RNA sequence: GGGAACGACUCGAGUAGAGUCGAAAACAAUCUUUGUAAGAGGCAAGUGCUGCGAGUAGGGGGACAUUAAAAUACACUCGGCGCUUUCACCCGGAAGGAACCAUUCACUGCAGCUUAACUCCGGAGCCACUAGGAGGUAGUUCGCUACCUCCUAGUGAAAAGAAACAACAACAACAAC
Reactivity to DMS in 0.01 (KOAc 150mM, MgCl2 10mM, bicine 150mM(pH8.5), 24C), signal-to-noise 4, nucleotides 027 to 126: c070a140a100u000c050u000u010u010g000u020a130a050g020a120g000g000c100a050a040g010u010g010c040u010g020c070g010a040g030u000a050g040g000g010g020g010a110c180a090u000u010a020a050a060a070u000a060c070a050c050u000c020g010g030c090g010c030u010u000u000c080a100c070c020c000g000g010a070a050g000g000a050a070c060c020a090u000u000c090a110c110u010g020c060a040g010c020u000u000a100a110c050u000c010c030g000g010a130g000c130
Reactivity to 2A3 in 0.01 (KOAc 150mM, MgCl2 10mM, bicine 150mM(pH8.5), 24C), signal-to-noise 2, nucleotides 027 to 126: c000a030a140u050c040u070u150u170g110u170a050a050g030a030g100g000c020a020a070g020u030g060c020u070g060c060g050a020g010u130a240g030g000g000g000g040a010c010a020u140u230a200a160a020a040u100a020c020a010c010u010c000g030g080c020g010c000u030u070u040c050a060c010c000c000g010g000a030a040g060g020a030a020c030c020a020u100u070c050a050c080u060g010c020a040g010c000u060u100a120a040c030u000c000c010g030g030a030g030c030